This 177-nucleotide RNA was probed chemically with DMS and 2A3. Source: RMDB libraries RFM100 and RFMREP, as collected in RNAgym.

[RMDB]
RNA sequence: GGGAACGACUCGAGUAGAGUCGAAAACCGCUGGCCCACAAGGCCACCGAUAUGCGCACUAGAGGAAACCAACGGCUCAGGCCGGGCGGGUCCCGCGCAGUUUUCCCGCUGAUCCGGCAAUCCUUCGGAAGAUAACAGUAUUCGUACUGUUAUCUUCAAAAGAAACAACAACAACAAC
Reactivity to DMS in 0.01 (KOAc 150mM, MgCl2 10mM, bicine 150mM(pH8.5), 24C), signal-to-noise 9, nucleotides 027 to 126: c110c010g030c230u000g010g000c000c010c030a120c300a150a300g000g000c020c010a010c100c020g010a080u010a050u000g020c020g010c010a170c170u020a110g010a120g000g000a040a050a080c020c020a200a140c020g000g000c010u000c190a130g010g000c000c010g020g000g010c090g010g000g010u000c010c010c030g000c020g010c010a040g000u000u000u010u000c000c000c010g000c090u010g000a080u000c050c010g000g000c060a100a070u010c050c020u010u000c180g010
Reactivity to 2A3 in 0.01 (KOAc 150mM, MgCl2 10mM, bicine 150mM(pH8.5), 24C), signal-to-noise 9, nucleotides 027 to 126: c020c000g000c050u030g010g000c000c010c010a150c040a100a050g010g010c000c000a000c000c020g060a060u060a060u200g020c030g000c010a060c130u130a090g040a080g160g020a050a060a060c010c010a040a030c020g010g000c020u050c120a120g170g000c010c010g010g020g010c230g040g000g010u020c000c010c000g000c000g000c000a000g000u030u020u030u030c010c000c000g000c050u050g020a070u030c030c010g030g010c030a020a080u070c010c000u090u100c050g050